Chemical mapping of a 207-nucleotide RNA with DMS and 2A3.
The data come from the RNA Mapping Database (RMDB), library OK3TST.
The reactions ran in a buffer of 150 mM KOAc, 10 mM MgCl2 and 150 mM bicine (pH 8.5), at 24 C.
Values cover nucleotides 27 to 156.
For DMS, 2,226 sequencing reads were counted.
[RMDB]
RNA sequence: GGGAACGACUCGAGUAGAGUCGAAAACUUGAGAAAUGAGCACUUGCACCACUUUCACUCCUGUGCUUGCCAACUCCCUGCCCAGGGCCCUCUGAUUUUGCAGAUUCUUUUCCUGGAGCCAUUCAUUAAAGCCACAGUCAAGAAUUUACCAGUCCUACUUUAGUCUCAGAUUCGUCUGAGACUAAAGAAAAGAAACAACAACAACAAC
Reactivity to DMS in 0.01 (KOAc 150mM, MgCl2 10mM, bicine 150mM(pH8.5), 24C), signal-to-noise 1, nucleotides 027 to 156: c040u000u000g000a150g020a110a070a130u010g000a110g020c010a090c040u010u010g020c040a040c060c010a060c060u000u010u010c080a100c050u010c050c030u010g020u000g030c060u000u000g010c010c010a080a130c040u000c040c010c010u010g020c050c040c030a160g010g040g040c060c030c010u010c020u000g010a110u000u010u000u000g030c030a110g000a100u000u010c040u000u010u010u020c060c060u000g010g000a160g080c010c040a130u000u000c110a130u000u000a030a070a100g020c000c020a050c020a030g010u000c040a040a080g000a050a060u000u000u000a040c030c090a190g040u000c030c010u000a170
Reactivity to 2A3 in 0.01 (KOAc 150mM, MgCl2 10mM, bicine 150mM(pH8.5), 24C), signal-to-noise 3, nucleotides 027 to 156: c020u040u090g040a000g030a050a150a070u130g000a030g000c010a020c040u070u100g000c030a030c070c000a050c030u060u150u080c060a020c080u060c020c020u050g010u030g020c000u030u070g010c030c000a010a100c010u040c040c020c010u010g030c000c010c040a030g030g020g000c010c040c010u040c000u020g080a110u110u070u150u240g050c020a020g200a300u090u120c020u070u080u070u080c010c020u030g020g000a010g080c020c000a030u110u090c010a020u070u210a080a090a020g010c010c000a010c000a000g020u030c030a050a000g000a070a070u060u090u090a080c010c050a000g030u070c040c000u100a070